The record gives the reactivity of an RNA of 207 nucleotides to 2A3 and DMS. For 2A3 the reverse transcriptase was SuperScript II with manganese. In probing experiments dimethyl sulfate is read out at A N1 and C N3, which are open when not base-paired. For DMS the reverse transcriptase was MarathonRT. For DMS, 1,375 sequencing reads were counted. The data come from the RNA Mapping Database (RMDB), library RNAMAK.

RNA sequence: GGGAACGACUCGAGUAGAGUCGAAAAUCUUCUUUCGAGAAGAGCGUCGCGUACUACUAUGAGGUGCGACUCGAUAAGUUACUUCCCAAAUAGGAAGUAACUUUUGACGAGUACGCACUACCCACCAUAGUAUCGCUUAAACCAUAUUCGUAUGGAAUCGUGCUCUUCAAUUCGUUGAAGAGCACGAAAAAGAAACAACAACAACAAC
Reactivity to 2A3 in 0.01 (KOAc 150mM, MgCl2 10mM, bicine 150mM(pH8.5), 24C), signal-to-noise 2, nucleotides 027 to 156: u020c010u000u000c000u070u130u250c300g030a080g000a020a010g000a010g020c090g170u180c120g010c000g020u060a170c010u000a020c000u000a010u050g020a000g020g000u000g000c000g000a000c000u000c000g010a040u030a050a000g000u000u000a000c000u000u050c000c000c010a240a170a120u140a060g000g000a000a000g000u000a000a000c000u000u000u000u090g100a040c000g010a000g000u070a290c000g000c000a000c000u000a000c000c000c020a090c000c020a010u000a010g020u000a010u300c000g000c010u060u140a050a070a060c000c020a050u020a010u040u110c300g040u070a030u060g070g000a130a100
Reactivity to DMS in 0.01 (KOAc 150mM, MgCl2 10mM, bicine 150mM(pH8.5), 24C), signal-to-noise 1, nucleotides 027 to 156: u000c050u010u000c000u000u000u000c160g020a090g030a080a060g000a030g000c080g110u010c050g020c070g020u000a150c100u000a050c020u000a020u020g000a270g010g000u000g060c050g010a080c000u000c000g010a230u000a010a000g010u000u000a010c000u000u010c000c000c060a000a140a230u000a120g010g010a050a000g000u000a000a000c000u000u000u000u000g000a300c160g010a030g000u000a140c000g060c010a000c010u000a010c000c000c030a300c240c020a000u000a020g000u000a010u000c010g000c030u010u000a050a100a250c040c000a000u000a110u000u010c240g090u000a070u000g010g010a020a120